[RMDB]
RNA sequence: GGGAACGACUCGAGUAGAGUCGAAAAGAUUAGGCAGAUAACAACUAUUACGCGUCUUGCCACUGUAUUGUAAAGUAAACAACAAGAAAUAAGUUUAAUACACCUACGCGACAAGAUGAAUCAGCAACCCUAGCACAGGAUUCGUCCUGUGCUAGGGAAAAGAAACAACAACAACAAC
Reactivity to 2A3 in 0.01 (KOAc 150mM, MgCl2 10mM, bicine 150mM(pH8.5), 24C), signal-to-noise 2, nucleotides 027 to 126: g030a010u060u200a070g030g120c050a010g070a140u030a170a060c080a060a060c050u050a070u180u110a110c090g010c020g060u010c000u040u010g000c030c000a030c030u070g000u050a030u090u030g040u030a030a110a210g030u010a080a010a000c050a050a000c050a050a130g140a150a170a050u220a110a050g010u010u040u030a040a010u060a020c030a010c030c040u040a000c040g030c010g030a020c010a010a030g000a030u040g010a060a030u080c020a000g020c020a020a130
Reactivity to DMS in 0.01 (KOAc 150mM, MgCl2 10mM, bicine 150mM(pH8.5), 24C), signal-to-noise 1, nucleotides 027 to 126: g020a110u010u010a030g030g010c020a050g010a050u000a050a130c060a060a050c060u000a060u000u000a200c200g020c060g020u000c010u020u030g000c060c020a030c020u010g010u000a020u010u020g000u010a000a050a080g000u000a030a030a020c060a070a150c100a140a090g000a080a120a060u000a080a110g000u000u000u000a020a050u010a040c060a010c120c070u000a010c060g000c030g000a000c020a010a010g000a060u000g000a020a080u020c020a070g000c040a090a120